Source: RMDB library M2RFPK, as collected in RNAgym. An RNA of 207 nucleotides, treated with DMS and 2A3 and read out base by base. Values are in units of 0.01, from 0 to 300, in steps of 10.

[RMDB]
RNA sequence: GGGAACGACUCGAGUAGAGUCGAAAAAUCUUUAAGCAGAUGUCAGGUUCACCCCGUACGGUGCGGAAGUUCGCGCUUCCGUGAAACGCGAAAAUCGGACGGUGGCUGCAAGUCGCAUCGCAAAACCUAUAGCUUGUUAGGUUCGCCUAACAAGCAAUCUAAUUAUUGGUUUCGACCAAUAAUUAGAAAAAGAAACAACAACAACAAC
Reactivity to DMS in 0.01 (KOAc 150mM, MgCl2 10mM, bicine 150mM(pH8.5), 24C), signal-to-noise 2, nucleotides 027 to 156: a070u000c020u000u000u000a080a160g000c060a110g020a050u000g010u000c060a090g020g000u000u000c030a070c030c000c000c020g040u000a020c020g010g040u010g030c050g000g010a100a060g030u000u000c180g020c220g010c010u010u000c000c100g010u020g000a020a070a060c060g000c040g010a060a050a120a080u000c040g020g020a020c010g010g000u000g020g020c070u000g000c080a080a080g010u000c020g000c010a050u000c050g000c020a060a080a090a090c020c020u000a130u010a150g020c010u010u000g000u010u000a020g010g020u000u010c300g040c010c000u000a010a000c000a010a010g020c010a010a010
Reactivity to 2A3 in 0.01 (KOAc 150mM, MgCl2 10mM, bicine 150mM(pH8.5), 24C), signal-to-noise 6, nucleotides 027 to 156: a000u080c050u050u150u070a120a030g010c060a070g020a020u010g050u080c060a050g060g000u090u100c010a020c010c000c000c000g000u010a010c020g000g020u030g010c000g000g010a010a000g010u110u230c090g020c030g000c120u000u000c000c000g010u020g050a090a090a020c130g020c030g070a080a040a010a070u060c010g000g010a010c020g040g070u140g070g000c100u030g000c040a040a030g050u050c030g010c020a010u010c010g000c030a030a060a040a080c020c020u110a090u090a200g000c000u000u000g000u000u000a000g000g000u020u040c150g030c040c010u000a010a000c000a000a000g000c000a000a000
The DMS profile rests on 5,337 reads.